Structure probing data (2A3 and DMS) for a 177-nucleotide construct. The data come from the RNA Mapping Database (RMDB), library OK2TST. The RNA was probed in 150 mM KOAc, 10 mM MgCl2 and 150 mM bicine (pH 8.5) at 24 C. As a SHAPE reagent, 2A3 marks flexible, mostly unpaired nucleotides at the ribose 2'-OH. For DMS, 1,042 sequencing reads were counted. Values cover nucleotides 27 to 126.
RNA sequence: GGGAACGACUCGAGUAGAGUCGAAAAGAGUUCAAGGCGUUGGAGGAGUGGCCGAAACGCGCCUCAACCUGCCCAAUGGCAAGAUGUUUCGAGCCUGGGCAAAUCCCAUUCCUUCGGGAGCGGAUCGCAAGCUCAUCCUGUUCGCAGGAUGAGCUUGAAAAGAAACAACAACAACAAC
Reactivity to 2A3 in 0.01 (KOAc 150mM, MgCl2 10mM, bicine 150mM(pH8.5), 24C), signal-to-noise 1, nucleotides 027 to 126: g060a010g020u070u060c070a050a000g030g000c030g030u030u080g050g010a000g020g010a090g130u250g140g150c000c000g000a010a040a000c020g020c000g010c030c000u000c010a020a000c000c050u030g030c000c000c000a020a100u240g020g000c010a040a020g020a020u120g190u170u200u070c000g040a000g010c000c020u030g030g000g000c010a020a020a020u030c010c000c000a010u060u020c000c000u070u100c140g040g000g000a050g000c040g030g040a080u130c040g000
Reactivity to DMS in 0.01 (KOAc 150mM, MgCl2 10mM, bicine 150mM(pH8.5), 24C), signal-to-noise 2, nucleotides 027 to 126: g000a090g010u000u000c080a020a080g000g020c020g030u000u000g000g010a270g000g010a270g070u010g000g010c000c020g000a120a120a090c070g000c050g030c050c010u000c170a090a060c060c040u000g000c000c000c020a010a120u020g000g020c040a040a270g000a050u000g000u000u000u000c010g000a300g000c020c010u000g000g000g000c000a020a050a120u000c040c000c060a150u010u000c060c010u000u060c190g020g010g000a030g020c160g010g000a110u000c090g000